[RMDB]
RNA sequence: GGGAACGACUCGAGUAGAGUCGAAAAGAGGCGAAGAACCUCGGAGGUUCCCUCCCAAGAAGGUUCAAGAGAAUACAAGAAAUGGAGGAAUUUCCCCAUAACGCCGGUGAAACUCUUGGAAGCGGAAGUACCAGUUAGUUCGCUAACUGGAAAAGAAACAACAACAACAAC
Reactivity to DMS in 0.01 (KOAc 150mM, MgCl2 10mM, bicine 150mM(pH8.5), 24C), signal-to-noise 9, nucleotides 027 to 129: g020a030g020g010c070g000a060a050g010a110a120c030c010u020c030g000g010a060g020g020u000u000c020c020c010u000c010c000c040a110a080g000a130a050g030g010u040u030c010a030a090g030a050g010a080a070u010a080c050a070a070g000a050a090a050u030g020g010a060g020g010a070a090u030u030u020c030c010c000c120a060u040a090a080c100g010c050c060g000g000u000g010a060a090a060c020u020c010u000u020g000g030a030a030g030c050g000g000a050a040g000u030a130
Reactivity to 2A3 in 0.01 (KOAc 150mM, MgCl2 10mM, bicine 150mM(pH8.5), 24C), signal-to-noise 9, nucleotides 027 to 129: g020a000g010g010c070g050a080a030g030a090a090c010c000u000c000g010g000a030g020g000u050u050c000c000c000u010c000c000c000a020a040g070a030a020g060g010u050u100c020a020a000g040a010g000a070a050u120a120c040a050a030g040a070a100a020u110g030g020a090g030g050a050a040u070u090u090c000c000c000c000a040u080a110a030c080g020c060c030g010g000u070g020a090a040a020c020u020c010u040u050g020g010a020a020g050c050g030g030a050a020g040u070a090

Background: The record gives the reactivity of an RNA of 170 nucleotides to DMS and 2A3. The RNA was probed in 150 mM KOAc, 10 mM MgCl2 and 150 mM bicine (pH 8.5) at 24 C.